[RMDB]
RNA sequence: GGGAACGACUCGAGUAGAGUCGAAAAUUGAAGGUAAAACAGCCUGUGGGUGAAACACACCCACAGGGCCCAUUGGGCGCUAGCACUCUGGUAUCACGGGACCUUUGUGCGCCUGUUUUACCGAAGGCGCGGUCCUACUUCGGUAGGACCAAAAGAAACAACAACAACAAC
Reactivity to 2A3 in 0.01 (KOAc 150mM, MgCl2 10mM, bicine 150mM(pH8.5), 24C), signal-to-noise 9, nucleotides 027 to 129: u140u140g070a100a010g010g000u000a000a000a000a000c000a000g000c000c000u000g000u000g000g010g000u010g040a050a110a000c150a010c010a000c040c010c000a000c000a000g000g000g000c000c000c000a020u220u300g000g000g000c020g000c090u110a050g000c000a000c000u000c000u000g000g020u060a050u250c060a080c220g130g140g060a020c010c000u000u000u000g000u000g000c000g000c000c000u000g000u000u000u000u000a010c000c000g010a000a000g060g000c070g020c090
Reactivity to DMS in 0.01 (KOAc 150mM, MgCl2 10mM, bicine 150mM(pH8.5), 24C), signal-to-noise 9, nucleotides 027 to 129: u030u000g020a130a130g020g000u000a000a000a000a000c000a030g020c030c000u000g020u000g000g020g010u020g010a090a150a090c220a200c000a000c040c020c010a030c010a020g030g040g010c000c010c020a010u000u090g010g010g010c020g000c000u020a070g070c000a000c010u020c010u000g000g020u020a070u070c060a050c170g050g010g020a030c000c000u000u000u000g020u010g020c030g020c000c010u000g010u010u010u000u000a000c010c020g000a060a050g010g030c120g030c190
Chemical mapping of a 170-nucleotide RNA with 2A3 and DMS.
2A3 adducts were read by reverse transcription with SuperScript II with manganese.
Source: RMDB library 15KLIB, as collected in RNAgym.
For DMS, 75,693 sequencing reads were counted.